[RMDB]
RNA sequence: GGGAACGACUCGAGUAGAGUCGAAAAGUUGCCCUGUUCAGACAGGAGUAAUCCCAGCUGAAACAGGGUUUUCACCCUUCCUUUCUUCUGGUUUCCUUCCUCUGCUUCAGCGGCCUCGCCCGGAACCGUACUUACCUAGGUUCGCCUAGGUAAGUACAAAAGAAACAACAACAACAAC
Reactivity to 2A3 in 0.01 (KOAc 150mM, MgCl2 10mM, bicine 150mM(pH8.5), 24C), signal-to-noise 2, nucleotides 027 to 126: g070u050u060g010c000c010c000u000g000u010u010c000a020g040a130c080a080g020g030a010g050u080a020a080u020c000c000c000a000g020c010u010g020a040a070a060c300a180g040g010g000u070u000u050u020c020a030c010c000c000u000u020c000c000u030u050u020c010u050u020c000u040g000g050u000u060u030c020c000u030u060c000c000u050c000u030g060c110u080u050c020a030g040c040g090g020c000c020u060c030g030c000c010c030g000g060a040a040c050c050
Reactivity to DMS in 0.01 (KOAc 150mM, MgCl2 10mM, bicine 150mM(pH8.5), 24C), signal-to-noise 3, nucleotides 027 to 126: g000u010u000g000c000c010c000u000g010u000u000c010a010g010a030c140a190g010g010a020g000u010a060a060u000c080c010c010a120g010c040u000g000a030a020a010c100a000g000g000g010u000u000u000u000c140a090c020c000c000u000u000c030c030u000u000u000c000u000u000c020u000g010g000u000u010u000c010c020u000u000c040c040u000c020u000g010c150u010u000c020a050g010c120g020g000c020c030u000c080g000c010c000c010g010g010a100a070c140c150